Background
An RNA of 177 nucleotides, treated with 2A3 and DMS and read out base by base. Values cover nucleotides 27 to 126. Values are in units of 0.01, from 0 to 300, in steps of 10. Conditions: 150 mM KOAc, 10 mM MgCl2 and 150 mM bicine (pH 8.5), 24 C. The data come from the RNA Mapping Database (RMDB), library TTRDEL.
[RMDB]
RNA sequence: GGGAACGACUCGAGUAGAGUCGAAAAGAUAUGGAGCUUUGACAUGCUUUGAGUGUCGGAAACGACAUGUAAGAGCAACAGCACGGAGCUCCUAAGUCAAAGGAGAUUCGGUUCGCCGAAUCUCCAAGUAAUGUCAUCAGUUCGCUGAUGACAUUACAAAAGAAACAACAACAACAAC
Reactivity to 2A3 in 0.01 (KOAc 150mM, MgCl2 10mM, bicine 150mM(pH8.5), 24C), signal-to-noise 4, nucleotides 027 to 126: g040a030u070a070u150g000g000a000g010c030u000u030u000g040a070c040a070u080g000c020u030u050u050g070a070g040u010g000u010c010g010g000a080a070a040c020g010a000c000a010u030g090u140a030a020g010a000g080c010a060a150c060a090g100c110a030c050g030g000a000g010c000u000c000c000u020a120a020g050u060c040a110a020a080g010g000a000g010a000u000u000c020g010g050u060u110c300g030c090c000g000a000a000u000c000u000c000c000a000a000
Reactivity to DMS in 0.01 (KOAc 150mM, MgCl2 10mM, bicine 150mM(pH8.5), 24C), signal-to-noise 6, nucleotides 027 to 126: g010a030u000a300u020g000g010a010g020c010u000u000u010g000a150c090a150u010g010c000u000u000u000g010a180g000u010g010u000c000g010g000a090a080a220c010g010a000c000a000u000g000u010a220a060g010a010g010c010a030a080c220a090g010c100a120c060g000g000a010g010c000u000c000c000u000a020a050g010u010c040a080a120a130g000g000a020g000a010u000u000c000g000g010u010u020c260g010c010c000g000a020a000u000c000u000c000c000a010a030